[RMDB]
RNA sequence: GGGAACGACUCGAGUAGAGUCGAAAAGUUGUAAGGAAGGUGAAAAGAUCGCUCUUAAUUAGAUUAAAAACAUUGUUUUCUUCCUGUGUCAUUUUGCCCUGAAAAUCAAGGCCAAUUUUUUCCUUUCAAAUGUACCAGCGUUCGCGCUGGUACAUUUAAAAGAAACAACAACAACAAC
Reactivity to DMS in 0.01 (KOAc 150mM, MgCl2 10mM, bicine 150mM(pH8.5), 24C), signal-to-noise 1, nucleotides 027 to 126: g000u000u000g000u000a030a000g010g000a040a050g000g020u030g000a050a080a080a080g010a030u000c130g000c100u000c030u000u030a070a120u010u060a140g020a220u030u030a050a030a090a080a140c060a060u000u010g030u030u000u000u000c000u000u000c010c000u000g000u000g000u030c050a050u000u000u000u010g000c050c010c040u000g000a050a030a060a090u000c100a070a090g000g000c050c090a000a000u010u000u010u010u000u000c010c040u000u000u020c040
An RNA of 177 nucleotides, treated with DMS and read out base by base. The reactions ran in a buffer of 150 mM KOAc, 10 mM MgCl2 and 150 mM bicine (pH 8.5), at 24 C.